[RMDB]
RNA sequence: GGGAACGACUCGAGUAGAGUCGAAAAAUGCUCAACGCAUUCACCUUCACGACCUGUCCAACGAUAGGGGGUGACUGCUUAGGCCUGCCUAAUGACACAGAUGUUGAUGUCUAUGUCACGUCAGAAGAUGCGUGAGGUUGUUCGCAACCUCACGCAUAAAAGAAACAACAACAACAAC
Reactivity to DMS in 0.01 (KOAc 150mM, MgCl2 10mM, bicine 150mM(pH8.5), 24C), signal-to-noise 1, nucleotides 027 to 126: a050u000g010c000u000c050a160a210c260g020c000a010u000u000c050a030c050c000u000u030c130a170c140g010a240c010c030u000g010u020c000c090a130a100c240g000a050u000a000g010g010g020g010g000u000g000a080c140u000g000c010u000u000a130g000g010c000c050u000g000c070c000u000a170a110u030g000a000c000a000c040a020g010a000u010g000u000u030g000a090u000g000u000c000u020a060u000g030u000c000a010c180g010u000c110a030g010a140a110g000
Reactivity to 2A3 in 0.01 (KOAc 150mM, MgCl2 10mM, bicine 150mM(pH8.5), 24C), signal-to-noise 1, nucleotides 027 to 126: a000u060g000c030u040c020a040a030c010g010c000a000u000u000c020a030c050c030u040u190c240a130c200g130a180c030c000u020g080u100c050c050a240a040c080g040a060u030a070g030g050g000g000g030u000g010a000c000u010g000c000u000u080a020g010g000c000c000u080g000c030c020u070a140a040u100g000a010c000a000c000a040g020a000u040g100u260u170g140a130u300g020u100c010u020a070u000g040u020c070a020c120g060u000c060a040g070a150a010g040
This 177-nucleotide RNA was probed chemically with DMS and 2A3. Source: RMDB library OK2TST, as collected in RNAgym. For DMS the reverse transcriptase was MarathonRT. Values cover nucleotides 27 to 126.